Chemical mapping of a 177-nucleotide RNA with 2A3 and DMS. The RNA was probed in 150 mM KOAc, 10 mM MgCl2 and 150 mM bicine (pH 8.5) at 24 C. For 2A3 the reverse transcriptase was SuperScript II with manganese. The DMS profile rests on 10,065 reads. DMS adducts were read by reverse transcription with MarathonRT.
RNA sequence: GGGAACGACUCGAGUAGAGUCGAAAAAUCGGGCCAGAAGUAAAAGUUGUGCACGCCGAGCACCUUGUCAAGGCUGUGGUCGGCAACCGGCAGGGUUACUCCAUCGCCGUGAUAAAGCGAGAUCAGGGUGAAGAGCAUAAUUCGUUAUGCUCUUCACAAAAGAAACAACAACAACAAC
Reactivity to 2A3 in 0.01 (KOAc 150mM, MgCl2 10mM, bicine 150mM(pH8.5), 24C), signal-to-noise 5, nucleotides 027 to 126: a000u030c020g030g000g020c020c010a040g020a170a020g070u220a060a080a020a030g030u070u070g060u100g060c050a030c100g010c010c000g000a010g030c010a000c020c000u120u170g180u200c170a130a070g030g000c060u040g050u030g020g120u030c030g040g030c010a000a010c010c000g000g000c030a080g030g000g000u040u090a050c040u020c020c010a120u080c050g000c000c000g020u010g010a030u160a050a100a010g040c030g040a030g000a080u090c100a070g160g020
Reactivity to DMS in 0.01 (KOAc 150mM, MgCl2 10mM, bicine 150mM(pH8.5), 24C), signal-to-noise 5, nucleotides 027 to 126: a060u040c010g010g010g020c000c000a070g010a090a060g000u020a050a060a100a090g000u020u010g010u000g000c120a120c120g010c020c010g000a060g020c080a030c030c040u000u010g010u010c170a090a060g000g000c110u010g000u010g000g010u010c080g010g010c070a060a050c050c020g010g000c020a060g000g000g000u000u010a070c130u040c020c050a080u010c170g000c000c000g000u000g010a090u030a090a150a060g000c030g000a070g000a110u020c110a090g010g010
It was measured as part of the RMDB library OK1LIB.